About this RNA: The record gives the reactivity of an RNA of 207 nucleotides to 2A3.
RNA sequence: GGGAACGACUCGAGUAGAGUCGAAAACCAGCGAGAGGCGUGGAGAGAGGGCCGCGGUGCUCUGGAGUAGAGGGUGUGCCUUCGAAACACCAUCGAUCGUCCCUUCUUUUUUACCUUCUUUUGGCUCUUCCGAUGAGACGCGACCGGUGGCAUCACCCAUCCUGAAAUCGUUCGCGAUUUCAGGAUGAAAAGAAACAACAACAACAAC
Reactivity to 2A3 in 0.01 (KOAc 150mM, MgCl2 10mM, bicine 150mM(pH8.5), 24C), signal-to-noise 2, nucleotides 027 to 156: c050c010a020g060c090g050a090g010a000g000g040c110g040u100g030g010a010g000a010g000a020g000g010g000c000c040g040c010g010g010u000g020c010u000c000u040g000g000a010g000u010a000g020a010g020g040g030u200g090u170g300c000c000u020u020c000g040a010a010a000c010a000c180c000a000u010c000g070a300u050c010g010u020c020c000c000u180u160c020u060u060u020u000u030u120a040c000c000u030u050c000u000u030u030u060g030g010c030u040c020u140u000c050c070g100a130u140g010a040g000a060c030g010c030g110a070c050c000g000g000u010g020g030c040a060u180c020a080c010c040
2A3 adducts were read by reverse transcription with SuperScript II with manganese. It was measured as part of the RMDB library VIROID.